[RMDB]
RNA sequence: GGGAACGACUCGAGUAGAGUCGAAAAGAUAUGGAGCGUGAUGAAUGAACUACCUCGAUGGGUCGGAAACGACCCAACGAGGCAUUCUGACUCCUAAGUCGAAUGAGCUGUGUUCGCACAGCUCAAAGCUGUGGCAUAGAUUCGUCUAUGCCACAGCAAAAGAAACAACAACAACAAC
Reactivity to 2A3 in 0.01 (KOAc 150mM, MgCl2 10mM, bicine 150mM(pH8.5), 24C), signal-to-noise 1, nucleotides 027 to 126: g000a000u010a030u170g000g020a010g020c150g110u220g120a140u110g000a100a000u020g040a040a070c090u110a130c300c000u010c000g030a020u000g000g010g010u010c030g010g000a000a090a060c040g000a020c040c020c010a000a000c000g020a000g000g000c000a000u000u000c030u020g100a150c000u000c000c020u010a090a010g000u030c000g020a120a150u120g000a010g000c020u000g000u020g020u110u080c220g050c140a000c000a030g020c080u000c010a000a010a020
Reactivity to DMS in 0.01 (KOAc 150mM, MgCl2 10mM, bicine 150mM(pH8.5), 24C), signal-to-noise 2, nucleotides 027 to 126: g010a000u000a300u000g000g010a020g020c160g010u020g020a060u030g010a030a010u000g010a070a020c060u010a300c030c000u000c000g040a040u000g010g000g020u020c010g000g000a120a020a230c010g010a000c000c000c000a000a000c000g030a010g020g000c010a000u000u000c010u000g000a260c010u000c000c000u030a020a140g000u010c030g000a170a140u010g010a020g000c020u020g040u010g000u000u020c300g000c020a000c000a000g000c020u000c000a020a010a080